Chemical mapping of a 207-nucleotide RNA with 2A3. Values cover nucleotides 27 to 156. For 2A3 the reverse transcriptase was SuperScript II with manganese.
RNA sequence: GGGAACGACUCGAGUAGAGUCGAAAACACCAUCUGACCAACGCUUGUUUGCUAUUGCCAACGCUCUCUCGGAUGGUUACUCUGUCGACAAGGUCUGGCAAUUGACUAACAUUGACAAGUGGUUCUUGAACAAGUUGGAUGGCUUGAUCAAGUUUGGGUAACACGUGUGGUUCGCCACACGUGUUACAAAAGAAACAACAACAACAAC
Reactivity to 2A3 in 0.01 (KOAc 150mM, MgCl2 10mM, bicine 150mM(pH8.5), 24C), signal-to-noise 3, nucleotides 027 to 156: c070a010c000c000a070u040c040u030g080a050c060c050a110a030c040g000c080u050u090g010u020u000u050g000c010u080a100u140u130g010c000c010a030a000c050g040c090u060c010u020c020u020c060g100g020a000u010g030g000u040u000a040c080u080c020u020g080u140c030g010a030c030a150a010g030g010u030c050u030g050g030c000a080a080u060u090g100a150c020u040a080a000c000a050u110u100g050a090c050a080a020g030u010g070g020u090u030c020u000u000g000a050a050c000a010a020g010u000u010g250g120a060u010g010g000c000u000u040g050a060u050c010a010a030g030u000u120u100g140g000